Background
This 207-nucleotide RNA was probed chemically with 2A3. Values cover nucleotides 27 to 156. It was measured as part of the RMDB library RNAMAK. The RNA was probed in 150 mM KOAc, 10 mM MgCl2 and 150 mM bicine (pH 8.5) at 24 C.

RNA sequence: GGGAACGACUCGAGUAGAGUCGAAAAGGGGUCAAAGUUUGCAAUACUCUGUAACAGAGCUUGGAUUUAUGGAGCUGAAGCCUCCACGGCUCCAUUGUCAGCUCUGCCCAGAGUAUCUUUGACGGAGGCACCCAAAAGACACCGUUCGCGGUGUCAACUUUGGUCUGUUGUUCGCAACAGACCAAAGAAAAGAAACAACAACAACAAC
Reactivity to 2A3 in 0.01 (KOAc 150mM, MgCl2 10mM, bicine 150mM(pH8.5), 24C), signal-to-noise 1, nucleotides 027 to 156: g020g010g040g040u030c020a040a020a020g100u210u300u300g050c020a020a020u020a030c000u020c010u000g000u090a190a010c000a000g000a010g050c000u170u260g130g000a020u110u300u140a020u080g010g000a000g000c000u030g040a130a000g050c010c000u000c010c000a030c000g000g000c000u000c000c000a000u010u000g020u000c030a030g010c010u060c000u000g040c020c010c000a000g000a000g010u010a060u010c020u050u010u010g000a000c000g030g000a000g000g010c030a050c010c000c000a040a090a010a040g010a000c000a000c000c000g000u070u030c190g000c030g070g000u010g030u090c000a010a030